Structure probing data (DMS and 2A3) for a 207-nucleotide construct.
RNA sequence: GGGAACGACUCGAGUAGAGUCGAAAAGUACGACAACUUAUUACGCAUCGUCGUACGAUGGAUGCUAAGAUUAGUGGCGAAAGCCACAAGCACGGGCAUUCAUAAGUCAGAUCCGAGAGGAUUUGACGUCCUAGCCUGUGCAAGACUAGGUCAGACAAAUAUCGGCGGUAUUCGUACCGCCGAUAUUAAAAGAAACAACAACAACAAC
Reactivity to DMS in 0.01 (KOAc 150mM, MgCl2 10mM, bicine 150mM(pH8.5), 24C), signal-to-noise 1, nucleotides 027 to 156: g040u000a020c000g000a050c000a120a080c070u010u010a120u010u010a150c230g050c120a090u000c120g080u000c020g000u000a000c050g010a030u000g010g000a010u000g030c050u000a190a120g000a130u010u000a150g040u000g010g040c000g000a130a160a250g000c000c010a000c020a020a040g010c020a090c070g010g030g000c000a050u000u000c040a010u000a010a040g010u010c010a010g010a010u000c000c000g010a300g030a260g030g020a030u000u020u010g000a030c010g000u000c020c010u000a030g000c000c000u030g040u000g010c140a060a010g020a050c030u000a000g060g010u010c030a100g020a200c050a080
Reactivity to 2A3 in 0.01 (KOAc 150mM, MgCl2 10mM, bicine 150mM(pH8.5), 24C), signal-to-noise 2, nucleotides 027 to 156: g000u000a010c000g000a000c020a090a030c140u150u170a120u200u180a250c230g040c050a070u060c110g010u010c000g010u020a010c020g000a010u050g050g000a010u020g020c030u070a050a060g000a270u070u180a060g010u000g010g020c010g050a130a010a010g030c000c000a000c000a000a000g060c000a000c070g010g010g000c010a010u040u000c010a040u060a070a020g000u000c000a000g000a010u000c010c000g010a000g000a030g000g010a000u000u020u020g000a000c000g010u000c000c000u020a020g010c000c000u040g060u080g050c050a040a010g000a010c000u010a010g000g010u050c030a010g060a170c080a040
About this RNA
Reactivities are given for positions 27 through 156. 2A3 adducts were read by reverse transcription with SuperScript II with manganese.